[RMDB]
RNA sequence: GGGAACGACUCGAGUAGAGUCGAAAAGAUAUGGAGGGUAUCCACUCCCCACCGAGUACAUCGGAAACGAUGUGACUCGAGGUGGAGUACCCUCCUAAGUCAAAAGAUGCCACUUCGGUGGCAUCAAUCGUUAUAUGCUGUUCGCAGCAUAUAACGAAAAAGAAACAACAACAACAAC
Reactivity to DMS in 0.01 (KOAc 150mM, MgCl2 10mM, bicine 150mM(pH8.5), 24C), signal-to-noise 4, nucleotides 027 to 126: g000a050u010a300u010g010g000a000g010g000g010u010a080u000c020c060a070c020u010c060c050c020c030a300c090c000g000a010g020u000a040c010a010u000c000g000g000a140a150a160c010g000a020u010g010u010g010a000c000u000c010g000a130g000g000u000g010g010a080g000u000a010c000c000c010u000c000c010u000a010a100g000u000c040a130a070a170a180g000a020u000g000c010c000a010c000u000u020c210g040g010u000g010g010c000a010u010c010a060a060
Reactivity to 2A3 in 0.01 (KOAc 150mM, MgCl2 10mM, bicine 150mM(pH8.5), 24C), signal-to-noise 2, nucleotides 027 to 126: g020a020u070a050u190g000g000a010g000g000g020u020a020u050c020c030a010c050u090c000c070c000c000a080c050c000g000a000g000u000a010c000a000u000c000g030g010a060a050a040c020g000a010u020g060u110g250a090c010u000c010g000a040g040g020u070g020g020a060g120u040a000c000c000c000u000c000c000u010a010a010g030u000c020a000a000a010a220g010a010u010g000c000c020a000c010u090u130c300g130g000u000g000g000c000a010u000c000a000a000